RNA sequence: GGGAACGACUCGAGUAGAGUCGAAAAAGAAAGAGAGCGUAGCAGACACACAGACUAAGUCUGACACACACCUACGCUACAUGUGUGUGUGAAGUCGAGAUAUCGACAAGUGUGUGUGAUGAAAAAACAAAAGUUCAUUGUUCGCAAUGAACUUUUGAAAAGAAACAACAACAACAAC
Reactivity to 2A3 in 0.01 (KOAc 150mM, MgCl2 10mM, bicine 150mM(pH8.5), 24C), signal-to-noise 5, nucleotides 027 to 126: a000g060a020a050a010g110a000g010a010g040c020g010u020a000g000c040a010g070a050c000a000c000a000c000a030g040a030c020u090a180a040g030u010c020u030g040a010c000a000c000a000c000a000c000c010u040a020c020g040c050u070a020c030a040u110g050u020g020u020g000u000g010u010g050a050a010g000u000c000g010a020g020a150u200a050u150c000g010a010c020a040a050g010u010g000u010g000u020g040u010g020a010u060g020a010a100a030a010a010a010
Reactivity to DMS in 0.01 (KOAc 150mM, MgCl2 10mM, bicine 150mM(pH8.5), 24C), signal-to-noise 6, nucleotides 027 to 126: a070g000a080a080a070g020a090g000a070g010c030g020u000a030g010c070a040g010a050c030a020c040a090c010a030g000a010c020u010a120a130g010u000c010u000g000a050c010a010c000a000c000a000c010c020u000a020c040g010c130u000a080c090a040u000g000u000g020u000g010u000g000u000g000a020a060g000u000c010g000a040g010a160u010a080u000c010g010a010c010a030a030g020u000g020u000g020u000g000u000g000a130u000g010a010a030a050a070a060a110